[RMDB]
RNA sequence: GGGAACGACUCGAGUAGAGUCGAAAAUAAUUACAGGGUAGGCGACAAUGAUAGUCACGAGAACAGCUAAACACAAGUAUGUCAUGGACUCCGUUGCGCAAUCGUCGUGAUCGUGCCGGUUGCAAAGCGGAUGCUUUGGGUUCGCCCAAAGCAUCCGAAAAGAAACAACAACAACAAC
Reactivity to DMS in 0.01 (KOAc 150mM, MgCl2 10mM, bicine 150mM(pH8.5), 24C), signal-to-noise 2, nucleotides 027 to 126: u040a070a030u000u000a080c220a070g000g000g000u000a060g010g010c010g020a040c070a080a080u020g010a050u000a060g000u010c000a060c010g010a090g010a040a040c060a130g000c040u020a210a050a060c220a060c140a070a060g010u000a040u040g010u000c070a060u050g000g000a060c000u010c030c000g000u000u010g000c200g000c080a030a040u000c090g010u020c030g010u010g000a050u010c170g010u010g000c070c000g000g000u000u000g000c020a050a170a070g000
Reactivity to 2A3 in 0.01 (KOAc 150mM, MgCl2 10mM, bicine 150mM(pH8.5), 24C), signal-to-noise 3, nucleotides 027 to 126: u190a000a030u180u080a070c050a040g010g000g030u060a030g010g070c020g020a020c000a050a150u170g050a100u060a050g010u060c000a000c180g130a120g060a070a010c000a030g000c050u140a010a130a000c070a020c010a090a040g080u170a200u180g010u070c030a030u070g120g050a020c000u000c030c020g090u060u070g040c040g000c010a000a030u010c000g080u020c030g020u080g070a080u070c030g020u090g030c030c000g000g000u000u000g010c010a000a000a070g090
Chemical mapping of a 177-nucleotide RNA with DMS and 2A3. For 2A3 the reverse transcriptase was SuperScript II with manganese. The data come from the RNA Mapping Database (RMDB), library OK1LIB. The RNA was probed in 150 mM KOAc, 10 mM MgCl2 and 150 mM bicine (pH 8.5) at 24 C. The 2A3 profile rests on 1,412 reads.